[RMDB]
RNA sequence: GGGAACGACUCGAGUAGAGUCGAAAAUAAAAAUCCCAGCUGCCAUACCCACCAUCGACAGGAGUAUGAACCUGGCCACUGACACAACUACUACAGUCAUAGUGGGAUACAGCUCAUAACACAAAAACUACCACAUUGUGUUCGCACAAUGUGGUAGAAAAGAAACAACAACAACAAC
Reactivity to DMS in 0.01 (KOAc 150mM, MgCl2 10mM, bicine 150mM(pH8.5), 24C), signal-to-noise 2, nucleotides 027 to 126: u030a010a090a070a150a180u000c000c020c000a050g010c010u000g040c050c110a130u010a130c030c040c000a060c000c030a020u000c150g000a000c000a080g010g000a040g010u000a060u010g010a040a090c120c220u010g000g000c040c050a080c070u000g020a050c050a050c080a030a170c130u000a010c000u000a080c020a060g040u000c000a080u010a010g000u000g000g000g000a090u000a080c020a020g000c000u010c090a110u000a060a090c060a090c090a050a070a100a080a080
Reactivity to 2A3 in 0.01 (KOAc 150mM, MgCl2 10mM, bicine 150mM(pH8.5), 24C), signal-to-noise 2, nucleotides 027 to 126: u120a000a080a000a000a010u000c010c030c000a000g010c010u020g000c060c070a120u140a300c040c020c000a000c010c010a040u070c050g000a000c000a030g000g090a030g030u040a050u160g050a060a070c000c020u030g060g050c050c070a110c100u090g050a000c010a010c010a250a010c030u080a010c010u060a020c040a030g000u050c000a010u050a060g000u010g000g000g000a000u030a010c010a030g010c020u030c050a160u190a090a090c100a010c000a050a060a010a070a060

About this RNA:
An RNA of 177 nucleotides, treated with DMS and 2A3 and read out base by base. The reactions ran in a buffer of 150 mM KOAc, 10 mM MgCl2 and 150 mM bicine (pH 8.5), at 24 C. For DMS the reverse transcriptase was MarathonRT.